[RMDB]
RNA sequence: GGGAACGACUCGAGUAGAGUCGAAAAGAUAUGGAUACGCGAGUUCGAGAUCCACUCGGAAACGAGUGAAGAUCGAUGAGAACUCAUCCUAAGUCAAAACCCGCCAACCGUUCGCGGUUGGCGGGAAGUACAUGAAACUGUUCGCAGUUUCAUGUACAAAAGAAACAACAACAACAAC
Reactivity to 2A3 in 0.01 (KOAc 150mM, MgCl2 10mM, bicine 150mM(pH8.5), 24C), signal-to-noise 3, nucleotides 027 to 126: g000a000u040a010u080g000g000a030u070a120c240g060c080g300a010g010u000u000c010g010a010g000a040u010c010c000a010c000u000c020g000g050a030a020a010c010g000a000g000u020g040a100a100g010a000u010c020g050a300u070g020a020g010a000a000c010u000c010a010u000c000c000u010a050a010g030u000c010a030a000a090a240c020c010c030g050c000c020a000a000c010c000g110u130u130c300g000c030g180g000u010u010g030g000c040g000g000g000a000a000
Reactivity to DMS in 0.01 (KOAc 150mM, MgCl2 10mM, bicine 150mM(pH8.5), 24C), signal-to-noise 2, nucleotides 027 to 126: g000a020u000a110u030g000g000a000u000a070c240g030c260g000a020g000u000u000c000g010a040g000a020u000c000c000a010c010u000c000g010g010a020a020a070c000g010a010g000u000g000a130a110g000a000u000c000g020a210u000g000a220g000a000a010c000u000c010a040u000c000c000u000a020a120g000u000c010a120a070a130a110c010c000c000g000c000c010a000a010c000c000g010u010u020c210g010c030g020g000u000u000g000g020c000g010g000g000a000a020